[RMDB]
RNA sequence: GGGAACGACUCGAGUAGAGUCGAAAAGUGGCGGCUUUCUGGGUCAUCAGCUUGGCGAGUUCGACCUCAAUGUGGCACUGCGCCAACGGAUGUGCCAGGCCCUGGUGCGCGCCGAUCGGGGUGGACCCACCCCCUCCGCAUUCGUGCGGAGGGGGUGAAAAGAAACAACAACAACAAC
Reactivity to DMS in 0.01 (KOAc 150mM, MgCl2 10mM, bicine 150mM(pH8.5), 24C), signal-to-noise 2, nucleotides 027 to 126: g030u010g020g020c090g010g010c040u000u000u020c010u020g020g010g000u010c010a060u000c030a090g030c220u000u000g010g000c010g010a050g000u000u010c050g000a200c020c070u010c150a070a130u010g020u000g010g010c010a070c020u010g020c040g030c010c010a010a050c040g020g010a030u010g030u000g030c030c030a060g010g000c050c020c040u010g020g010u000g020c020g050c040g000c010c020g010a050u000c070g000g000g000g050u010g000g000a050c090c070
Reactivity to 2A3 in 0.01 (KOAc 150mM, MgCl2 10mM, bicine 150mM(pH8.5), 24C), signal-to-noise 1, nucleotides 027 to 126: g070u050g060g000c070g010g000c100u070u080u030c050u090g020g010g020u000c010a030u040c000a020g090c090u000u040g020g000c040g000a020g030u060u120c050g190a250c010c020u090c080a160a290u200g040u100g100g010c020a010c050u220g130c020g000c000c010a000a000c070g100g020a030u020g030u050g150c000c000a010g010g000c000c000c000u080g030g050u100g000c090g000c020g010c020c030g040a080u140c050g000g000g000g000u040g000g040a010c000c020